[RMDB]
The data come from the RNA Mapping Database (RMDB), library RFM100. Chemical mapping of a 177-nucleotide RNA with DMS and 2A3. As a SHAPE reagent, 2A3 marks flexible, mostly unpaired nucleotides at the ribose 2'-OH.

RNA sequence: GGGAACGACUCGAGUAGAGUCGAAAACUCUAGUAAGUUUGUAAGACGUCUGAUGACGUGUGGGAAAACACUAGAAAUAUUAACUUGCUGUAAAGCAUCCUACUGCCAGCGGAAUCACAUCUGGUAACUAAAGGGCUCCAUUCGUGGAGCCCUUUAGAAAAGAAACAACAACAACAAC
Reactivity to DMS in 0.01 (KOAc 150mM, MgCl2 10mM, bicine 150mM(pH8.5), 24C), signal-to-noise 2, nucleotides 027 to 126: c130u000c050u000a020g020u000a140a000g000u000u000u000g030u100a290a050g010a040c000g000u010c000u080g020a130u010g020a000c010g020u000g030u010g030g070g000a010a010a010a030c000a000c010u000a000g000a060a050a110u020a130u010u060a030a080c140u020u000g000c000u000g000u010a140a210a020g040c010a080u000c020c060u000a070c180u040g040c000c000a060g030c300g000g000a300a030u040c180a050c140a100u000c010u000g010g000u000a130a150
Reactivity to 2A3 in 0.01 (KOAc 150mM, MgCl2 10mM, bicine 150mM(pH8.5), 24C), signal-to-noise 1, nucleotides 027 to 126: c060u060c050u000a000g000u020a300a080g000u000u020u030g120u090a020a000g100a020c000g000u010c050u160g300a270u300g000a030c040g040u110g080u080g060g030g090a000a000a090a000c020a030c000u000a000g000a010a030a000u110a010u080u000a120a080c020u000u120g000c000u020g050u210a000a090a130g020c000a000u000c030c000u000a080c000u010g000c000c000a040g000c030g070g120a130a040u240c040a010c000a190u050c080u020g020g000u000a020a020
Reactivities are given for positions 27 through 126.